[RMDB]
RNA sequence: GGGAACGACUCGAGUAGAGUCGAAAAUCACUGGACUUCGGUCCAGUGAAAAAGAAAGACGGACGGCGAACGUCAAACGGUGACGUACGAAAGUACGAAAAAAAAGUACGCCCUUCGGGGCGUACAACACAUUUGAUGUGUUCGCACAUCAAAUGUGAAAAGAAACAACAACAACAAC
Reactivity to DMS in 0.01 (KOAc 150mM, MgCl2 10mM, bicine 150mM(pH8.5), 24C), signal-to-noise 2, nucleotides 027 to 126: u000c000a000c000u000g000g030a000c000u000u010c190g030g020u020c000c000a000g020u000g000a000a020a070a090a070g000a080a080a090g010a060c090g010g000a070c110g000g000c070g000a030a070c030g010u010c030a030a040a150c080g030g020u010g030a180c010g040u000a000c010g000a180a070a130g000u000a000c030g020a000a010a000a120a080a010a050a180g010u000a010c010g000c000c000c000u000u010c090g040g010g010g050c000g030u000a000c000a010a050
Reactivity to 2A3 in 0.01 (KOAc 150mM, MgCl2 10mM, bicine 150mM(pH8.5), 24C), signal-to-noise 2, nucleotides 027 to 126: u030c010a000c000u000g000g000a010c010u020u040c260g070g000u000c020c000a000g010u000g000a010a000a000a010a000g070a000a020a000g040a000c030g060g000a010c020g080g080c060g050a150a010c010g020u000c000a040a050a000c070g020g100u130g090a030c020g010u000a010c020g040a070a080a040g000u020a010c030g160a060a000a010a000a000a000a020a010g010u000a000c000g030c000c000c000u010u070c160g020g010g000g070c010g010u000a000c000a000a000

Source: RMDB library M2PK50, as collected in RNAgym. Chemical mapping of a 177-nucleotide RNA with DMS and 2A3. The RNA was probed in 150 mM KOAc, 10 mM MgCl2 and 150 mM bicine (pH 8.5) at 24 C. For 2A3 the reverse transcriptase was SuperScript II with manganese.